[RMDB]
The data come from the RNA Mapping Database (RMDB), library OK3TST. The record gives the reactivity of an RNA of 207 nucleotides to DMS and 2A3. For 2A3 the reverse transcriptase was SuperScript II with manganese.
RNA sequence: GGGAACGACUCGAGUAGAGUCGAAAAAGUGGUACAAACACGGCUCACUGCACCUUCAACCUCCUGGGCUCAAGCAAUCCUCCUGCCUUUGCCUCCACAGUAGCUGAGACCACAGGCACGUACACCGCACCCAGCUGAUUUUUAAAUUUUUUGUAGAGUUUGGAAUGAAAUUCGUUUCAUUCCAAACAAAAGAAACAACAACAACAAC
Reactivity to DMS in 0.01 (KOAc 150mM, MgCl2 10mM, bicine 150mM(pH8.5), 24C), signal-to-noise 1, nucleotides 027 to 156: a070g000u000g040g030u010a140c040a120a100a100c070a070c050g040g000c010u000c010a110c030u010g000c040a120c040c010u000u000c050a080a110c040c000u010c030c000u000g000g000g080c040u010c030a040a080g000c040a100a090u000c040c000u040c020c020u000g010c030c020u000u000u000g010c020c060u020c010c010a120c030a080g030u000a080g000c040u000g000a070g020a090c010c010a000c040a080g040g050c010a040c090g000u010a090c000a070c010c070g040c060a090c010c010c010a130g010c040u000g020a030u000u010u000u000u020a040a080a110u000u020u010u030u010u020g000u020a120g000a300
Reactivity to 2A3 in 0.01 (KOAc 150mM, MgCl2 10mM, bicine 150mM(pH8.5), 24C), signal-to-noise 2, nucleotides 027 to 156: a000g070u050g020g030u090a070c050a030a140a010c040a030c030g010g010c020u010c000a030c020u020g030c000a050c060c010u170u110c030a050a060c020c000u030c010c020u070g010g020g000c030u060c040a000a070g020c000a040a070u040c020c000u010c000c020u030g020c000c000u020u020u090g010c040c000u070c040c040a060c010a050g060u090a020g000c030u030g030a000g030a050c020c030a030c050a080g020g000c040a010c070g000u020a030c040a000c020c000g020c000a010c000c000c020a000g000c040u030g030a070u040u080u030u030u120a100a120a090u170u030u020u030u030u030g130u120a070g050a010